This 177-nucleotide RNA was probed chemically with 2A3 and DMS.
Reactivities are rounded to 0.1 and cut off at 0 and 3.
Conditions: 150 mM KOAc, 10 mM MgCl2 and 150 mM bicine (pH 8.5), 24 C.
Source: RMDB library OK1LIB, as collected in RNAgym.
Values cover nucleotides 27 to 126.
For 2A3, 711 sequencing reads were counted.

RNA sequence: GGGAACGACUCGAGUAGAGUCGAAAAUGGUGUUAAGUGGAAUAAGUGGAAAAAUAUACAUAUAUGUACAGGGGGCUACAUAUAUGUAUAUGCCCCCUCGCCGUAGUAUAAGUAGGUAUAAGGUGGACCAUAGCGGUAUCUUCGGAUACCGCUAUGGAAAAGAAACAACAACAACAAC
Reactivity to 2A3 in 0.01 (KOAc 150mM, MgCl2 10mM, bicine 150mM(pH8.5), 24C), signal-to-noise 2, nucleotides 027 to 126: u090g060g000u060g020u080u060a170a100g030u110g030g050a080a220u070a200a010g030u190g040g000a030a050a030a090a000u020a000u000a000c010a010u000a000u010a020u000g010u060a000c060a040g070g000g020g000g050c000u010a010c000a000u000a000u000a000u000g000u010a000u000a000u000g000c000c000c000c020c000u030c030g010c000c000g090u110a010g010u000a130u010a280a000g030u060a020g040g080u060a100u010a050a050g090g000u050g010g060a030
Reactivity to DMS in 0.01 (KOAc 150mM, MgCl2 10mM, bicine 150mM(pH8.5), 24C), signal-to-noise 2, nucleotides 027 to 126: u010g000g030u000g030u030u010a070a200g020u030g010g020a150a060u000a050a080g020u000g000g000a020a040a090a150a020u020a030u000a020c000a000u000a030u000a040u000g020u000a060c120a150g000g000g020g050g000c170u010a020c030a020u000a020u010a000u020g000u000a000u000a010u000g000c060c020c000c000c040u010c030g010c010c050g040u030a110g000u010a000u000a020a100g030u020a040g000g030u000a050u020a030a070g000g010u000g000g000a250

The DMS profile rests on 2,343 reads.